[RMDB]
RNA sequence: GGGAACGACUCGAGUAGAGUCGAAAAACAGUACCAGCUGCUACGGCAGCUGGGACUGAACUUUCAUGGAGUUAAGAAACCACGUAAACAAAGCGGAACCGAAAAGCUAAACGAGUAGGAAGAAUAAAUAGGUACCACCACUUCGGUGGUGGUACAACAAUUAUGUCAUCUUCGGAUGACAUAAUUGAAAAGAAACAACAACAACAAC
Reactivity to DMS in 0.01 (KOAc 150mM, MgCl2 10mM, bicine 150mM(pH8.5), 24C), signal-to-noise 3, nucleotides 027 to 156: a160c010a020g020u000a000c000c000a040g020c000u000g010c000u000a110c300g090g010c000a000g010c010u010g010g010g000a010c000u000g000a090a060c060u000u000u010c030a100u020g010g010a180g010u000u000a110a200g020a160a130a130c000c030a020c030g020u020a060a090a170c050a040a050a150g020c040g000g000a130a130c030c020g000a100a070a060a090g020c030u000a080a090a100c080g010a090g020u010a100g000g000a070a080g000a070a070u000a040a050a140u000a090g010g000u000a000c010c000a030c000c000a000c000u000u000c290g050g040u000g010g020u000g010g010u010a000c000a020a070
Reactivity to 2A3 in 0.01 (KOAc 150mM, MgCl2 10mM, bicine 150mM(pH8.5), 24C), signal-to-noise 8, nucleotides 027 to 156: a010c000a000g000u000a010c000c000a000g000c000u000g020c000u030a030c180g120g010c040a000g000c000u000g000g010g000a000c000u010g010a020a020c030u040u130u130c080a140u120g070g010a050g050u110u110a110a040g090a120a080a010c020c020a040c090g050u140a070a090a120c080a090a120a000g000c010g020g040a070a110c000c010g020a010a010a000a000g020c060u190a210a070a020c010g000a000g010u010a010g080g040a030a020g040a050a090u240a150a040a060u140a080g110g030u000a000c000c000a000c000c000a010c010u040u060c210g070g000u010g000g010u000g000g000u000a000c000a000a000

An RNA of 207 nucleotides, treated with DMS and 2A3 and read out base by base.
Reactivities are rounded to 0.1 and cut off at 0 and 3.
The reactions ran in a buffer of 150 mM KOAc, 10 mM MgCl2 and 150 mM bicine (pH 8.5), at 24 C.